[RMDB]
The data come from the RNA Mapping Database (RMDB), library VIROID. An RNA of 177 nucleotides, treated with DMS and read out base by base. For DMS the reverse transcriptase was MarathonRT. Conditions: 150 mM KOAc, 10 mM MgCl2 and 150 mM bicine (pH 8.5), 24 C. For DMS, 886 sequencing reads were counted.
RNA sequence: GGGAACGACUCGAGUAGAGUCGAAAAUUCCGAGGGGACCGUCCCCUCGGUAAUGGCGAAUGGGACCCACAAAUCUCUCUAGAUUCCGAUAGAGAAUCGAGAGAAAACUGGCACUCCCUUAGCCAUCGUUGAGUGUAAUGUUCGCAUUACACUCAACAAAAGAAACAACAACAACAAC
Reactivity to DMS in 0.01 (KOAc 150mM, MgCl2 10mM, bicine 150mM(pH8.5), 24C), signal-to-noise 2, nucleotides 027 to 126: u000u010c000c000g030a030g020g010g000g000a300c240c300g000u010c000c010c000c040u000c010g020g000u000a050a000u000g000g020c010g000a220a130u000g000g000g000a010c190c000c000a010c090a050a160a190u000c020u000c000u000c000u000a230g000a020u000u000c000c000g020a140u020a070g000a190g010a010a000u000c000g030a020g010a010g010a000a000a070a110c300u010g000g010c020a160c220u000c000c000c000u000u010a250g010c000c000a000u000c210